[RMDB]
RNA sequence: GGGAACGACUCGAGUAGAGUCGAAAAGAUAUGGAUGCUCCGAUAAGCUGCCAUCGGAAACGAUGGACAGCUUUUGACGGAGGAUCCUAAGUCAAAACACUGUAGUAUCUUCGGAUACUACAGUGAAGAUAUUUACUUACUUCGGUAAGUAAAUAUCAAAAGAAACAACAACAACAAC
Reactivity to 2A3 in 0.01 (KOAc 150mM, MgCl2 10mM, bicine 150mM(pH8.5), 24C), signal-to-noise 5, nucleotides 027 to 126: g000a000u030a010u050g000g010a010u030g180c000u000c010c010g040a080u070a300a020g000c010u010g000c000c010a010u000c000g020g000a020a010a010c000g000a010u000g000g000a010c000a000g000c000u010u010u030u010g000a000c000g000g000a000g030g030a000u000c000c000u000a030a000g030u010c000a010a030a110a150c010a010c000u010g000u010a000g000u000a000u000c010u040u070c300g100g000a000u000a010c000u000a000c000a000g000u000g010a010a010
Reactivity to DMS in 0.01 (KOAc 150mM, MgCl2 10mM, bicine 150mM(pH8.5), 24C), signal-to-noise 7, nucleotides 027 to 126: g000a010u000a060u010g000g000a010u000g000c000u000c000c000g020a040u010a010a000g030c000u000g000c000c000a010u000c000g010g000a030a020a030c000g010a010u000g000g000a070c000a000g020c000u000u000u000u010g000a280c020g000g000a020g000g000a010u000c000c000u000a000a060g000u000c010a120a080a130a250c010a010c010u000g010u000a010g000u000a000u000c000u000u010c200g020g000a010u000a000c000u000a000c000a000g000u000g000a030a070
This 177-nucleotide RNA was probed chemically with 2A3 and DMS. The reactions ran in a buffer of 150 mM KOAc, 10 mM MgCl2 and 150 mM bicine (pH 8.5), at 24 C. For DMS, 19,257 sequencing reads were counted. 2A3 adducts were read by reverse transcription with SuperScript II with manganese. For 2A3, 27,763 sequencing reads were counted. High 2A3 reactivity points to a flexible backbone, as in loops and unpaired stretches.